This 177-nucleotide RNA was probed chemically with DMS and 2A3.
For 2A3 the reverse transcriptase was SuperScript II with manganese.
[RMDB]
RNA sequence: GGGAACGACUCGAGUAGAGUCGAAAAGAUAUGGAUGGAGGCCUCUUUUGACGGAAUGCUAUCGGAAACGAUAGAAAUUCCGAUAAGAGGCUCCAUCCUAAGUCAAAGAAUGCCUUCGGGCAUUCAACAUGAUCAGCAAGUUCGCUUGCUGAUCAUGAAAAGAAACAACAACAACAAC
Reactivity to DMS in 0.01 (KOAc 150mM, MgCl2 10mM, bicine 150mM(pH8.5), 24C), signal-to-noise 1, nucleotides 027 to 126: g020a070u000a300u000g020g010a010u010g000g030a020g050g000c000c000u010c000u000u010u000u000g010a260c090g000g010a020a010u000g010c010u000a000u000c000g000g000a080a070a220c000g010a030u010a010g000a020a110a020u000u000c000c000g030a140u000a000a000g000a000g010g000c000u000c000c000a000u000c000c000u000a010a060g020u000c020a060a160a140g010a030a000u000g000c000c000u000u000c230g090g000g030c000a020u000u000c000a100a300
Reactivity to 2A3 in 0.01 (KOAc 150mM, MgCl2 10mM, bicine 150mM(pH8.5), 24C), signal-to-noise 1, nucleotides 027 to 126: g020a020u100a000u140g040g000a000u010g040g040a060g300g300c030c000u050c010u040u100u130u180g200a070c030g000g000a010a010u030g030c000u010a000u010c020g000g010a030a100a040c010g010a000u000a000g020a150a290a020u020u000c000c000g000a030u020a070a000g000a010g010g010c000u000c030c000a010u030c000c000u000a000a020g000u020c010a080a110a000g000a000a000u000g000c020c000u050u180c300g160g000g000c020a000u000u010c000a000a020
It was measured as part of the RMDB library TTRDES.